[RMDB]
RNA sequence: GGGAACGACUCGAGUAGAGUCGAAAAGUUAUGGAAAACGUCUUAGCUACCACUACAACAACAAUGGUGGACGGUGAUGGUUCGACUUACUCGAAACCAUCACGUAGUGGUAGUCGUUCCCAUUCAAAGAAAGGUCACUUUUCGAAGUGACCUUUCUAAAAGAAACAACAACAACAAC
Reactivity to 2A3 in 0.01 (KOAc 150mM, MgCl2 10mM, bicine 150mM(pH8.5), 24C), signal-to-noise 1, nucleotides 027 to 126: g050u100u060a060u190g110g010a000a060a000a220c020g020u000c040u070u160a050g000c010u020a000c000c000a010c000u000a010c020a110a000c010a040a030c010a080a230u130g040g060u050g100g000a020c050g000g000u020g000a000u010g020g010u030u000c010g010a060c040u170u240a090c000u100c010g030a100a070a080c000c000a000u000c010a000c000g010u000a000g000u000g000g050u000a020g010u010c000g000u000u040c000c010c000a010u120u090c050a110a110
Reactivity to DMS in 0.01 (KOAc 150mM, MgCl2 10mM, bicine 150mM(pH8.5), 24C), signal-to-noise 1, nucleotides 027 to 126: g010u000u000a090u000g010g010a060a090a120a060c040g000u020c020u000u000a210g000c000u010a000c010c000a000c000u000a010c000a110a110c220a120a040c100a060a100u010g000g010u000g000g000a070c020g050g040u000g000a040u000g020g000u000u000c010g010a040c200u000u000a130c300u010c000g000a020a070a050c000c010a010u010c000a010c000g010u000a010g010u010g000g000u000a050g040u000c000g000u000u000c000c010c010a120u000u010c120a060a100
Chemical mapping of a 177-nucleotide RNA with 2A3 and DMS. For 2A3, 1,063 sequencing reads were counted. The reactions ran in a buffer of 150 mM KOAc, 10 mM MgCl2 and 150 mM bicine (pH 8.5), at 24 C. The DMS profile rests on 814 reads. It was measured as part of the RMDB library M2PK90.